About this RNA: An RNA of 177 nucleotides, treated with 2A3 and DMS and read out base by base. For DMS the reverse transcriptase was MarathonRT. Reactivities are given for positions 27 through 126. 2A3 adducts were read by reverse transcription with SuperScript II with manganese. It was measured as part of the RMDB library OK1LIB.

RNA sequence: GGGAACGACUCGAGUAGAGUCGAAAAAUUUUCAUCGAAUUGAUGCUGAUGAAGUAUGGUACUAUCAUGCUGGUGAUUCUCUAACAAUUCAUAUGAUAAAUCCGGAUGGGGAAUAUACGACUGCAACCUUUGCUGUUCCUUUCGAGGAACAGCAAAGAAAAGAAACAACAACAACAAC
Reactivity to 2A3 in 0.01 (KOAc 150mM, MgCl2 10mM, bicine 150mM(pH8.5), 24C), signal-to-noise 3, nucleotides 027 to 126: a000u060u070u000u040c030a040u010c040g020a030a040u070u070g070a030u080g080c090u050g000a030u020g010a040a030g020u050a050u050g030g000u080a050c040u010a080u110c010a020u030g070c020u020g060g060u030g120a140u130u010c050u000c020u050a130a060c000a100a000u120u040c030a050u130a040u290g090a020u050a170a020a010u070c030c000g030g000a060u090g060g000g020g090a030a000u110a030u120a090c120g060a060c020u050g020c070a070a080c010
Reactivity to DMS in 0.01 (KOAc 150mM, MgCl2 10mM, bicine 150mM(pH8.5), 24C), signal-to-noise 2, nucleotides 027 to 126: a110u030u000u030u010c060a000u040c110g000a050a030u000u010g030a110u010g000c090u000g000a030u000g000a040a050g000u000a020u000g010g010u030a030c150u010a070u000c030a020u000g020c020u000g000g050u040g000a060u000u000c010u000c100u020a050a090c060a060a050u040u020c050a060u020a040u010g000a050u000a040a040a060u000c080c050g020g010a060u020g010g000g020g010a110a090u050a050u000a090c020g000a040c090u010g000c150a060a070c130